[RMDB]
RNA sequence: GGGAACGACUCGAGUAGAGUCGAAAAUAAAUACGUGACGUUACCGGGUUCGAGGCCAGCUACGAAUUCUCGAGUUCGAACUCGAUCCGAUCGACGUCCUCACCUUUCGACGUGUGGUCUACGAUCGAUUUAAUGGGACUUUCGAGUCCCAUUAAAUAAAAGAAACAACAACAACAAC
Reactivity to DMS in 0.01 (KOAc 150mM, MgCl2 10mM, bicine 150mM(pH8.5), 24C), signal-to-noise 7, nucleotides 027 to 126: u010a060a070a090u000a090c160g010u010g020a030c020g010u000u000a050c080c010g010g010g000u000u010c030g000a040g010g020c160c060a030g000c030u000a120c030g020a030a170u010u000c170u000c020g010a050g010u000u000c110g010a060a120c010u000c010g000a010u000c030c010g010a020u000c070g040a030c040g000u000c000c060u000c120a080c070c070u000u010u000c090g000a040c050g000u000g010u010g000g000u000c080u000a090c050g010a100u000c030g010
Reactivity to 2A3 in 0.01 (KOAc 150mM, MgCl2 10mM, bicine 150mM(pH8.5), 24C), signal-to-noise 5, nucleotides 027 to 126: u110a010a090a030u190a060c120g060u130g020a000c010g000u020u030a020c020c010g010g010g040u070u110c010g000a010g020g030c070c020a010g020c030u160a290c110g020a060a110u300u060c080u040c120g010a020g010u010u070c080g020a060a030c020u000c010g000a030u000c010c010g000a010u060c130g020a010c010g000u010c000c010u030c020a070c000c000u070u200u130c020g020a040c010g020u030g030u060g040g070u000c030u030a030c040g120a220u040c020g000
Structure probing data (DMS and 2A3) for a 177-nucleotide construct. The 2A3 profile rests on 5,421 reads. Conditions: 150 mM KOAc, 10 mM MgCl2 and 150 mM bicine (pH 8.5), 24 C. For 2A3 the reverse transcriptase was SuperScript II with manganese. In probing experiments dimethyl sulfate is read out at A N1 and C N3, which are open when not base-paired.